Source: RMDB library TTRINS, as collected in RNAgym. Chemical mapping of a 177-nucleotide RNA with DMS. The reactions ran in a buffer of 150 mM KOAc, 10 mM MgCl2 and 150 mM bicine (pH 8.5), at 24 C. DMS adducts were read by reverse transcription with MarathonRT.

RNA sequence: GGGAACGACUCGAGUAGAGUCGAAAAGAUAUGGAUCACGAUUCAAAUGACAGAUAGACAUGCUUGCGGAUCGGAAACGAUCCGGGAGCAACAGCUAUUCUGUCAUUUGAAUCGUGAUCCUAAGUCACAUUACUCGUACCUUCGGGUACGAGUAAUGAAAAGAAACAACAACAACAAC
Reactivity to DMS in 0.01 (KOAc 150mM, MgCl2 10mM, bicine 150mM(pH8.5), 24C), signal-to-noise 2, nucleotides 027 to 126: g010a020u000a300u000g000g000a010u000c000a000c010g000a020u010u000c000a000a020a010u000g030a010c020a000g010a020u000a020g030a050c130a300u010g000c000u020u000g000c000g010g010a000u000c000g000g010a160a100a210c020g020a020u000c000c000g000g000g000a000g000c000a020a060c300a190g000c020u000a020u000u000c000u000g000u000c000a000u000u000u000g000a010a010u010c000g010u000g010a010u010c000c000u000a010a060g010u010c080a300